The data come from the RNA Mapping Database (RMDB), library OK3TST. An RNA of 207 nucleotides, treated with DMS and 2A3 and read out base by base. The RNA was probed in 150 mM KOAc, 10 mM MgCl2 and 150 mM bicine (pH 8.5) at 24 C.
[RMDB]
RNA sequence: GGGAACGACUCGAGUAGAGUCGAAAACCCGGACGACGCCGUAUACAACGGUUGAACCCACGGGACAAGCAGACUUCCGCGAGCAGAACCCCGCCCGCGCCACGGACCAUUACGUCAUGGGCGUCACGGUAGAGACGACGGGCUUGAGUGAGUCGCGGUAGCCUAGGAAAUUCGUUUCCUAGGCUACAAAAGAAACAACAACAACAAC
Reactivity to DMS in 0.01 (KOAc 150mM, MgCl2 10mM, bicine 150mM(pH8.5), 24C), signal-to-noise 1, nucleotides 027 to 156: c020c010c000g000g010a140c030g000a210c170g000c010c040g040u000a090u010a190c110a210a120c010g010g050u010u000g020a260a090c000c000c010a110c070g030g000g000a080c070a110a140g010c100a110g010a090c030u000u010c030c000g000c020g020a020g040c080a160g010a170a230c010c000c000c090g010c020c020c000g000c030g020c000c050a080c010g000g010a030c000c040a110u010u000a030c000g030u000c040a120u000g000g010g000c020g000u000c070a000c020g000g020u010a100g040a150g020a040c070g020a080c050g000g000g000c040u000u010g000a090g010u000g020a180g000u000c010g030c020g020
Reactivity to 2A3 in 0.01 (KOAc 150mM, MgCl2 10mM, bicine 150mM(pH8.5), 24C), signal-to-noise 2, nucleotides 027 to 156: c010c000c000g010g040a040c060g010a000c030g000c010c000g020u030a170u070a200c140a110a020c050g000g020u030u170g070a050a040c060c000c010a070c080g000g000g010a050c050a070a030g100c080a050g010a150c030u140u000c050c000g020c020g010a020g020c130a070g000a110a130c000c000c000c000g000c000c000c000g000c000g000c030c020a100c120g050g070a020c010c010a090u110u090a060c040g040u030c060a190u230g150g000g000c050g000u010c010a010c010g000g000u060a060g010a020g020a150c040g020a040c040g000g030g000c040u070u110g030a060g070u080g020a080g040u040c010g000c010g020